The record gives the reactivity of an RNA of 177 nucleotides to 2A3 and DMS.
For 2A3, 768 sequencing reads were counted.
DMS adducts were read by reverse transcription with MarathonRT.
Values cover nucleotides 27 to 126.
RNA sequence: GGGAACGACUCGAGUAGAGUCGAAAACAAUUUGCAGAUAUUUGGCAAACGUUAGAAACCCAAGGGCUAACGAAAAGUACCUUGAUUAUCAUCACAUCGGAUAUAGCAGAUAGCGUAGAUCAUGAAAAUCGUCGUACAAGUUCGCUUGUACGACGAUAAAAGAAACAACAACAACAAC
Reactivity to 2A3 in 0.01 (KOAc 150mM, MgCl2 10mM, bicine 150mM(pH8.5), 24C), signal-to-noise 1, nucleotides 027 to 126: c020a010a170u030u030u020g010c080a060g070a220u090a070u300u210u170g080g000c000a090a000a000c030g000u040u030a060g080a090a070a050c010c000c060a060a000g090g000g010c000u020a010a060c080g040a150a040a040a040g080u150a200c000c000u000u040g000a020u130u100a010u070c040a020u020c020a040c000a100u080c030g030g030a040u040a020u080a180g030c060a020g050a100u060a050g000c000g070u020a020g010a070u000c050a070u020g010a100a020a000
Reactivity to DMS in 0.01 (KOAc 150mM, MgCl2 10mM, bicine 150mM(pH8.5), 24C), signal-to-noise 1, nucleotides 027 to 126: c030a060a160u000u000u000g020c020a030g050a180u000a070u000u000u010g020g000c040a030a000a090c090g000u020u000a020g000a060a080a180c070c060c030a070a000g020g040g050c010u010a020a060c100g010a110a020a080a100g020u000a070c070c000u020u000g020a070u030u000a070u010c110a090u000c090a070c140a060u000c080g010g020a060u000a050u000a090g010c080a050g020a060u000a020g000c040g000u000a050g010a020u000c020a040u000g000a000a040a070